The record gives the reactivity of an RNA of 177 nucleotides to DMS. Reactivities are given for positions 27 through 126.
RNA sequence: GGGAACGACUCGAGUAGAGUCGAAAAAAAAAGAUAUGGAGCGAUGGGAGAGCUAGGGACUACCCACCUAUAUCGGAAACGAUAUAGAGGUCCCAGGGCUCGAAGAACAUCGCUCCUAAGUCAAAAACAAAAUCAACUACUUCGGUAGUUGAUUUUGAAAAGAAACAACAACAACAAC
Reactivity to DMS in 0.01 (KOAc 150mM, MgCl2 10mM, bicine 150mM(pH8.5), 24C), signal-to-noise 1, nucleotides 027 to 126: a010a040a090a080a090g010a040u020a300u000g000g000a010g000c010g000a020u000g000g000g010a060g000a020g030c000u010a200g020g000g000a010c020u000a100c000c010c050a300c190c000u000a000u000a000u000c000g020g020a090a040a220c000g030a000u000a010u000a000g000a100g020g010u000c000c000c000a060g020g000g010c000u010c030g000a080a170g000a110a280c000a010u000c000g000c020u000c000c000u000a000a000g010u020c020a040a160a090a150a150
For DMS the reverse transcriptase was MarathonRT. The RNA was probed in 150 mM KOAc, 10 mM MgCl2 and 150 mM bicine (pH 8.5) at 24 C.